This 177-nucleotide RNA was probed chemically with DMS and 2A3. Source: RMDB library TTRDES, as collected in RNAgym. Conditions: 150 mM KOAc, 10 mM MgCl2 and 150 mM bicine (pH 8.5), 24 C. For 2A3, 6,430 sequencing reads were counted. 2A3 adducts were read by reverse transcription with SuperScript II with manganese.

RNA sequence: GGGAACGACUCGAGUAGAGUCGAAAAGAUAUGGAUUCCCAGGACAUGCUGGCGGUCGGAAACGACCGGACCAGCAACAGCCUGUGGAAUCCUAAGUCAAAGAACGAACGGUUCGCCGUUCGUUCAACUCAGUCAUUAUCUUCGGAUAAUGACUGAGAAAAGAAACAACAACAACAAC
Reactivity to DMS in 0.01 (KOAc 150mM, MgCl2 10mM, bicine 150mM(pH8.5), 24C), signal-to-noise 3, nucleotides 027 to 126: g010a020u000a060u010g000g000a010u000u000c000c000c000a030g000g000a040c090a190u020g020c000u000g000g000c000g000g000u000c000g020g010a020a010a050c010g010a010c000c000g010g000a080c000c000a000g010c000a060a030c210a170g010c000c000u000g000u010g020g000a010a020u000c000c000u000a000a060g000u000c020a120a110a200g010a010a000c000g020a020a020c000g000g000u000u020c280g020c000c010g010u000u000c000g010u010u000c000a040a170
Reactivity to 2A3 in 0.01 (KOAc 150mM, MgCl2 10mM, bicine 150mM(pH8.5), 24C), signal-to-noise 3, nucleotides 027 to 126: g000a000u030a000u070g000g000a000u000u000c000c010c010a000g010g000a040c200a200u300g000c010u010g020g010c000g000g000u000c000g010g000a020a010a010c000g000a000c030c010g000g020a020c020c000a000g030c000a000a000c010a010g010c010c000u070g040u300g040g010a010a000u020c000c000u000a000a000g000u010c030a210a060a170g000a010a000c000g000a010a000c010g010g110u090u130c300g000c130c010g000u000u010c000g000u000u000c000a000a000